Source: RMDB library OK2TST, as collected in RNAgym. Structure probing data (DMS and 2A3) for a 177-nucleotide construct. DMS adducts were read by reverse transcription with MarathonRT. The reactions ran in a buffer of 150 mM KOAc, 10 mM MgCl2 and 150 mM bicine (pH 8.5), at 24 C. In probing experiments dimethyl sulfate is read out at A N1 and C N3, which are open when not base-paired. Reactivities are given for positions 27 through 126.
RNA sequence: GGGAACGACUCGAGUAGAGUCGAAAACGCAAUUCAUUGGAGCUUUGACAUUUAUUAUAGGAGACCAGAAGGAAAGUAUCAAAUGCAAGAAUUCUUAAGCUCAAUAAUGACUAUUUCUCCUAAAUCCAGUUCCAUGUUGAUUCGUCAACAUGGAACUAAAAGAAACAACAACAACAAC
Reactivity to DMS in 0.01 (KOAc 150mM, MgCl2 10mM, bicine 150mM(pH8.5), 24C), signal-to-noise 1, nucleotides 027 to 126: c230g040c200a150a010u010u010c170a040u000u000g010g000a090g050c300u000u000u000g000a180c070a070u030u000u010a020u060u000a050u000a120g010g020a070g010a040c150c150a040g000a010a090g030g010a160a050a040g020u000a060u000c090a090a040a130u000g000c040a060a040g000a290a160u000u000c010u010u000a070a120g020c020u000c010a000a030u010a020a020u010g020a080c100u000a040u000u000u000c030u000c000c010u010a030a030a020u020c150c180
Reactivity to 2A3 in 0.01 (KOAc 150mM, MgCl2 10mM, bicine 150mM(pH8.5), 24C), signal-to-noise 2, nucleotides 027 to 126: c040g050c090a080a150u130u100c050a060u090u120g020g020a000g040c010u030u030u130g080a020c030a020u120u140u070a070u190u040a060u070a140g060g030a010g010a010c020c010a020g010a050a030g040g000a020a080a020g000u000a020u200c170a130a110a040u070g000c010a030a030g000a060a060u030u020c000u100u100a150a000g000c000u000c000a000a040u090a000a010u030g000a000c000u050a060u060u120u000c020u000c000c010u050a070a080a020u050c010c020